Record summary:
This 177-nucleotide RNA was probed chemically with DMS and 2A3. DMS adducts were read by reverse transcription with MarathonRT. 2A3 adducts were read by reverse transcription with SuperScript II with manganese. Source: RMDB library OK1LIB, as collected in RNAgym.
RNA sequence: GGGAACGACUCGAGUAGAGUCGAAAAAGUUAAUUAAAUUACGUGGCAAAGAUAUUUCAAUGAUCUUUCAAGAUCCAAUGACAUCUUUAAACCCAACGAUGCAAAUUGGUAAACAAGUCAUGGAACCCGGCUAUUCCUAAUUCGUUAGGAAUAGCCGAAAAGAAACAACAACAACAAC
Reactivity to DMS in 0.01 (KOAc 150mM, MgCl2 10mM, bicine 150mM(pH8.5), 24C), signal-to-noise 2, nucleotides 027 to 126: a060g000u030u050a030a130u040u010a030a010a150u000u000a170c080g020u020g020g000c040a070a030a030g000a010u020a000u020u060u040c160a030a060u020g040a000u010c030u040u000u010c280a030a040g010a050u050c000c070a010a010u000g010a110c140a000u010c000u000u000u000a050a170a160c040c030c030a110a090c160g020a010u010g000c180a040a040a070u000u070g000g000u010a040a050a040c190a050a090g040u000c030a020u000g040g050a080a190c130c040
Reactivity to 2A3 in 0.01 (KOAc 150mM, MgCl2 10mM, bicine 150mM(pH8.5), 24C), signal-to-noise 4, nucleotides 027 to 126: a000g120u090u060a080a200u150u120a090a090a120u160u060a040c030g000u010g020g000c020a030a020a030g010a040u020a080u070u200u050c120a200a150u190g000a030u010c010u020u190u040c060a070a100g030a060u020c010c010a040a040u030g060a110c010a020u020c040u010u090u100a100a140a110c040c020c000a010a030c070g020a020u080g060c040a000a190a180u040u020g050g000u080a030a010a050c070a120a080g020u020c010a010u000g020g030a010a020c010c020